An RNA of 177 nucleotides, treated with 2A3 and read out base by base.
RNA sequence: GGGAACGACUCGAGUAGAGUCGAAAAGCAGCGCGCCGCCUGCCAUGCCAGGAACGCGUCGGCUCCGGCUUCGGUGGCCAGCUCGAUUGCCAAUUCGGAGCGUUCGGAUUUGGGCAGCGCCUGCACCACUUACCCGUCACUUCGGUGACGGGUAAGUAAAAGAAACAACAACAACAAC
Reactivity to 2A3 in 0.01 (KOAc 150mM, MgCl2 10mM, bicine 150mM(pH8.5), 24C), signal-to-noise 1, nucleotides 027 to 126: g000c020a000g020c000g000c020g000c150c010g030c000c000u050g000c040c010a120u280g000c010c020a090g200g070a060a030c010g020c010g140u050c040g020g040c010u070c070c130g000g020c000u120u060c000g030g000u130g040g000c040c020a000g030c020u070c030g090a120u040u300g000c020c040a010a060u100u080c010g000g060a080g020c000g020u100u090c050g000g020a050u090u100u210g000g020g000c010a010g020c000g020c000c030u000g000c010a010c000c010

The data come from the RNA Mapping Database (RMDB), library OK2TST.